Structure probing data (2A3) for a 207-nucleotide construct. For 2A3, 851 sequencing reads were counted. Reactivities are given for positions 27 through 156. Source: RMDB library RNAMAK, as collected in RNAgym. For 2A3 the reverse transcriptase was SuperScript II with manganese.
RNA sequence: GGGAACGACUCGAGUAGAGUCGAAAAGGGGUCAUUACCUACCCACCAUUUGAAGUCUCGGUAAUUCAUAUACUGAAGCCUCCACGGUAUAUGUGCCAGAGACCAAAUGAGGGUAAUGACGGAGGCACCCAAAUCUUGAACGUUCGCGUUCAAGAAAGGCGUCAUUAAUGUUCGCAUUAAUGACGCCAAAAGAAACAACAACAACAAC
Reactivity to 2A3 in 0.01 (KOAc 150mM, MgCl2 10mM, bicine 150mM(pH8.5), 24C), signal-to-noise 1, nucleotides 027 to 156: g000g070g030g030u000c000a000u030u000a040c030c000u230a300c010c020c000a000c010c010a030u000u030u030g290a300a060g000u000c010u000c020g080g060u180a070a030u140u040c000a000u030a000u010a030c010u030g060a120a060g020c000c000u010c000c000a020c000g040g000u000a000u000a010u010g010u010g130c150c070a200g000a000g000a000c000c000a000a000a000u000g000a000g000g000g000u000a000a000u020g000a000c000g010g000a000g010g000c000a030c000c040c030a030a110a120u000c010u010u010g000a000a000c000g000u040u100c300g010c000g110u000u040c040a000a000g030a040a010a000